[RMDB]
RNA sequence: GGGAACGACUCGAGUAGAGUCGAAAAGAUAUGGAGUUGAACGCGCUCCGAGUCUGAUGACCUCGGAAACGAGCAAGGACUCGAGAGCUAAGCAACUCCUAAGUCAAAACCCGCGUUCGCGCGGGAAGACAUCCAGUAUCUUCGGAUACUGGAUGUCAAAAGAAACAACAACAACAAC
Reactivity to 2A3 in 0.01 (KOAc 150mM, MgCl2 10mM, bicine 150mM(pH8.5), 24C), signal-to-noise 2, nucleotides 027 to 126: g040a010u100a040u180g000g000a020g000u000u000g010a260a060c040g030c020g020c140u000c000c000g010a000g000u000c010u010g130a300u100g050a230c030c020u000c000g000g050a140a130a030c010g020a020g020c040a150a190g020g000a000c010u000c000g300a300g000a000g300c000u010a050a030g000c000a010a000c000u000c000c000u040a140a020g040u030c010a050a020a050a250c010c000c000g000c040g020u030u060c300g000c000g020c010g070g000g000a000a050
Reactivity to DMS in 0.01 (KOAc 150mM, MgCl2 10mM, bicine 150mM(pH8.5), 24C), signal-to-noise 2, nucleotides 027 to 126: g010a010u000a300u000g000g000a020g000u010u000g000a010a090c110g000c260g000c010u000c010c010g000a030g030u000c010u000g000a060u000g010a060c300c000u000c000g010g000a030a110a120c000g000a010g000c040a070a160g010g020a010c000u000c000g010a260g000a030g000c010u020a060a150g000c000a000a010c020u000c000c010u010a000a030g000u000c010a080a130a150a090c000c000c000g020c000g080u000u000c190g000c030g020c000g000g000g000a000a040